This 207-nucleotide RNA was probed chemically with 2A3.
For 2A3, 596 sequencing reads were counted.
[RMDB]
RNA sequence: GGGAACGACUCGAGUAGAGUCGAAAACUCAACGAGUAAGAUUGACUAAACGCUUAAAAGUUAUUCUUACUAUGGGCGGUACGUAAAGAAACUUACGUAUGUUUACCUGUCAAACUCGGGGAAGCCAAUAGCGCGGUAAUCCCGAACCAAGCUCCAGCUGUAAAGCACGGUUCGCCGUGCUUUACAGAAAAGAAACAACAACAACAAC
Reactivity to 2A3 in 0.01 (KOAc 150mM, MgCl2 10mM, bicine 150mM(pH8.5), 24C), signal-to-noise 1, nucleotides 027 to 156: c050u050c020a000a030c090g020a000g020u010a000a040g000a050u070u070g000a000c010u030a050a300a120c080g040c100u160u220a160a140a000a000g000u000u000a000u020u010c000u020u000a010c010u020a030u050g060g020g000c080g010g010u010a000c000g000u000a000a090a040g080a160a200a000c040u030u040a000c000g000u000a000u010g030u000u020u060a050c010c020u120g110u080c080a110a060a060c050u020c000g020g000g000g040a070a070g010c000c000a090a050u200a120g040c190g030c090g030g010u020a010a110u030c000c020c000g010a010a010c030c030a070a000g020c020u040c000c030a050g010
It was measured as part of the RMDB library ARCHII. For 2A3 the reverse transcriptase was SuperScript II with manganese.